[RMDB]
About this RNA
Structure probing data (2A3 and DMS) for a 177-nucleotide construct. Reactivities are rounded to 0.1 and cut off at 0 and 3. DMS adducts were read by reverse transcription with MarathonRT. The reactions ran in a buffer of 150 mM KOAc, 10 mM MgCl2 and 150 mM bicine (pH 8.5), at 24 C.

RNA sequence: GGGAACGACUCGAGUAGAGUCGAAAAUGAAAGAGUUUCCUUUAACCUAUAUGGAAGCAAAGAUCAAGAAUACAACCUUCCCAUAUGGUUGACUUAAUUAUUCCCUAGGUUCCUGGAACCUAAAAAAGCAUUCUGGUUAAUUCGUUAACCAGAAUGCAAAAGAAACAACAACAACAAC
Reactivity to 2A3 in 0.01 (KOAc 150mM, MgCl2 10mM, bicine 150mM(pH8.5), 24C), signal-to-noise 1, nucleotides 027 to 126: u250g010a000a040a000g020a010g000u000u030u060c020c000u080u090u050a030a030c010c010u060a050u000a000u160g000g010a000a000g000c090a100a020a000g080a050u120c050a130a090g110a300a020u180a130c030a020a050c010c030u010u020c000c000c000a010u010a010u010g000g000u030u030g010a010c020u000u040a050a010u070u100a040u030u060c000c000c000u010a010g020g000u010u030c110c250u270g110g060a010a010c000c000u000a060a140a000a000a140a000
Reactivity to DMS in 0.01 (KOAc 150mM, MgCl2 10mM, bicine 150mM(pH8.5), 24C), signal-to-noise 1, nucleotides 027 to 126: u000g000a060a050a200g010a230g010u000u000u030c160c090u000u010u000a020a080c020c020u010a070u060a050u000g000g000a070a040g000c090a110a130a180g000a010u000c060a080a120g000a120a050u000a120c050a060a190c210c010u000u000c160c030c080a030u000a050u000g010g010u010u000g000a030c060u000u000a040a150u010u000a100u000u000c000c000c010u000a000g000g000u000u000c010c240u000g020g000a010a020c000c010u010a010a070a080a090a040a080